[RMDB]
RNA sequence: GGGAACGACUCGAGUAGAGUCGAAAACAGGUCGAUAGUACCAAUAACCCUGGUACCAAUAAGGUACUAUCGACCAUUUAGCUCUUCUUCUACAACACGCUCGCUGAAGAAGAGCAUUUCGGGUACCAGGGAAGCGAGCGCAAGGCCGAGAGGCCGAAUUUUAUCAUUAUUUCGAUAAUGAUAAAAUAAAAGAAACAACAACAACAAC
Reactivity to DMS in 0.01 (KOAc 150mM, MgCl2 10mM, bicine 150mM(pH8.5), 24C), signal-to-noise 1, nucleotides 027 to 156: c020a060g010g010u010c000g090a040u000a030g010u010a050c010c040a230a140u000a080a160c020c010c030u000g030g010u000a030c000c010a120a280u000a150a150g030g010u000a010c000u000a000u010c000g000a020c000c000a010u000u010u010a130g010c020u010c010u010u000c010u010u020c070u000a050c010a110a050c150a060c000g010c010u000c040g010c030u000g010a070a040g030a030a000g000a040g050c010a040u000u000u000c170g040g040g040u010a050c000c030a090g010g010g000a010a020g010c030g010a010g080c020g020c090a070a150g030g010c000c010g050a300g000a300g070g040c010c010g020a040
Reactivity to 2A3 in 0.01 (KOAc 150mM, MgCl2 10mM, bicine 150mM(pH8.5), 24C), signal-to-noise 2, nucleotides 027 to 156: c020a020g000g000u010c010g000a000u000a000g030u010a000c040c040a050a160u210a160a140c000c000c010u000g010g000u000a000c010c020a090a100u190a290a090g000g000u000a020c000u000a010u000c020g000a000c000c000a000u030u010u050a020g000c000u000c000u010u000c000u000u020c010u060a100c030a250a050c060a100c070g000c000u010c000g000c010u020g000a000a000g000a000a000g000a000g010c000a000u030u100u120c040g060g000g000u000a010c000c000a000g000g000g030a010a000g000c000g000a000g000c010g000c050a050a070g010g000c000c000g040a030g020a040g110g000c010c000g000a000

Structure probing data (DMS and 2A3) for a 207-nucleotide construct.
The 2A3 profile rests on 1,693 reads.
Source: RMDB library OK3TST, as collected in RNAgym.
For 2A3 the reverse transcriptase was SuperScript II with manganese.